[RMDB]
RNA sequence: GGGAACGACUCGAGUAGAGUCGAAAACGUCUUUAAUUAAAUUUCCCUUGCUGAGCUCAUCUCAGCAAACAAUAACAAAUAACAAAUAAGAACAGCAGGGAAGGUUGUUCUUAUUUGUUACAAUUAAUUCUAGUAAACAGUUCGCUGUUUACUAGAAAAAAGAAACAACAACAACAAC
Reactivity to DMS in 0.01 (KOAc 150mM, MgCl2 10mM, bicine 150mM(pH8.5), 24C), signal-to-noise 2, nucleotides 027 to 126: c210g020u000c060u000u000u010a090a080u000u020a080a120a190u010u000u000c000c010c010u010u000g000c000u010g000a000g020c300u040c300a130u020c000u010c000a010g000c020a010a010a070c170a140a050u000a050a100c130a070a110a150u000a020a000c000a000a010a030u000a000a000g000a010a010c000a010g020c000a040g010g020g000a160a120g010g020u000u000g000u000u000c000u000u000a020u010u000u000g010u000u000a000c030a090a070u000u000a040a170
Reactivity to 2A3 in 0.01 (KOAc 150mM, MgCl2 10mM, bicine 150mM(pH8.5), 24C), signal-to-noise 2, nucleotides 027 to 126: c040g090u070c160u100u230u090a150a210u080u090a080a080a070u050u040u000c010c000c040u000u000g000c000u000g000a020g000c070u060c150a140u150c150u020c010a010g000c030a000a000a020c030a020a040u290a100a000c090a100a090a030u040a020a010c000a000a000a000u020a000a020g000a000a000c010a020g030c000a010g140g040g190a090a030g110g000u000u000g000u000u000c000u010u000a000u000u000u000g000u000u000a010c010a000a020u060u070a010a070